[RMDB]
RNA sequence: GGGAACGACUCGAGUAGAGUCGAAAAGAUAUUAACGCGCGUGCUGUGUCUAACGCGAAUUACCCAGUUAUUUUCGACUUUACUCGAGUCGUUAUAGCGUGAUAUGACACAGUUAUCGGCGAACGAAGUCUAUCAAUCUCUUCGGAGAUUGAUAGACAAAAGAAACAACAACAACAAC
Reactivity to DMS in 0.01 (KOAc 150mM, MgCl2 10mM, bicine 150mM(pH8.5), 24C), signal-to-noise 1, nucleotides 027 to 126: g010a110u000a070u020u000a110a090c240g000c000g010c040g010u020g020c030u010g020u000g000u000c010u000a100a000c030g020c000g000a070a050u010u000a060c080c100c120a050g010u000u010a080u000u000u000u000c000g020a020c000u000u000u000a000c020u000c000g000a000g000u000c000g000u000u000a010u000a100g020c010g000u010g040a060u000a020u000g000a010c050a030c040a040g010u000u000a050u020c000g000g000c000g020a090a150c100g000a100a080